[RMDB]
RNA sequence: GGGAACGACUCGAGUAGAGUCGAAAAUCAUGUUUAUUCGUAAACAUGAAACGCCGCAGGGCGCGCCUGGCCACCAGGGAACGUGGAUAUGGAAGCCUGAGAAUGAGGUGCCGUUCGCGGCACCUAACCUACCACAUAUCUUCGGAUAUGUGGUAGGAAAAGAAACAACAACAACAAC
Reactivity to 2A3 in 0.01 (KOAc 150mM, MgCl2 10mM, bicine 150mM(pH8.5), 24C), signal-to-noise 3, nucleotides 027 to 126: u010c000a000u020g020u010u010u010a070u040u050c140g050u040a000a010a030c000a000u010g030a070a040a000c080g100c050c030g050c110a110g040g050g000c020g000c040g010c030c000u000g070g000c020c010a030c020c020a070g020g030g110a050a020c030g040u010g030g010a070u040a040u220g040g020a040a030g020c000c010u050g020a050g120a090a130u180g040a030g030g000u000g000c040c000g010u040u040c180g000c000g090g000c000a000c000c000u000a010a010
Reactivity to DMS in 0.01 (KOAc 150mM, MgCl2 10mM, bicine 150mM(pH8.5), 24C), signal-to-noise 3, nucleotides 027 to 126: u000c000a000u000g010u000u010u000a020u000u010c200g020u000a010a010a010c000a000u010g000a030a120a170c170g020c030c050g030c180a080g000g010g010c040g030c140g000c020c020u000g000g000c010c010a030c040c060a080g010g020g000a030a070c170g010u000g000g000a060u000a080u010g000g000a100a100g000c050c010u010g000a080g020a110a160u010g000a020g010g010u010g000c010c000g020u020u010c180g030c020g010g020c010a000c000c000u000a010a060